[RMDB]
RNA sequence: GGGAACGACUCGAGUAGAGUCGAAAAGAUAUGGACUGCAAUAAGAGGCAGAUUGAGACAUGAUCGAGGGUCGGAAACGACCCGAGAUCAACAGCUCACUGUCUGCCUCUUAUUGCAGUCCUAAGUCCAUAAUUAGUUCCUUCGGGAACUAAUUAUGAAAAGAAACAACAACAACAAC
Reactivity to DMS in 0.01 (KOAc 150mM, MgCl2 10mM, bicine 150mM(pH8.5), 24C), signal-to-noise 4, nucleotides 027 to 126: g000a050u010a300u010g000g010a010c000u000g000c000a020a010u000a010a000g030a010g010g000c000a010g000a020u010u000g000a030g020a020c080a270u010g010a030u000c000g000a300g010g010g030u000c000g000g010a090a110a300c000g000a020c000c000c010g000a180g010a000u000c010a010a040c240a130g000c040u000c000a080c300u010g000u000c000u000g010c010c000u000c010u000u000a000u000u000g000c000a000g010u000c000c000u000a020a050g010u000c050